[RMDB]
RNA sequence: GGGAACGACUCGAGUAGAGUCGAAAAUUUUAGGCCUGACCCUCACAUCACAGACACCUUAGUGUGCAUGAGGCGGGUGUGCAAGGUUUGCUCCACCUUAGGGCCACCUGGUAGGUACCUGAGGGUACCAUACCUACACCUUCGGGUGUAGGUAUGGAAAAGAAACAACAACAACAAC
Reactivity to DMS in 0.01 (KOAc 150mM, MgCl2 10mM, bicine 150mM(pH8.5), 24C), signal-to-noise 5, nucleotides 027 to 126: u000u020u000u010a100g020g010c070c030u000g000a090c120c020c010u000c020a040c080a080u000c060a060c090a110g000a180c080a040c060c090u000u000a110g020u000g010u000g000c110a150u000g000a050g020g020c150g010g000g020u000g000u000g010c100a060a040g010g010u000u000u000g010c050u000c070c040a110c020c010u000u000a080g000g000g000c010c040a020c020c050u000g010g010u000a050g010g020u000a040c020c010u010g020a080g010g000g000u000a070
Reactivity to 2A3 in 0.01 (KOAc 150mM, MgCl2 10mM, bicine 150mM(pH8.5), 24C), signal-to-noise 2, nucleotides 027 to 126: u080u080u020u100a050g020g050c020c010u010g070a110c010c010c000u000c000a040c010a090u130c010a040c050a100g210a150c020a090c060c020u100u140a090g030u060g030u030g180c040a070u060g030a030g070g020c070g030g000g000u080g030u060g090c060a080a060g070g010u080u130u060g020c020u070c030c010a090c000c000u010u020a010g050g000g000c010c000a020c000c020u040g160g070u120a120g020g020u140a270c000c010u010g020a030g030g010g010u020a040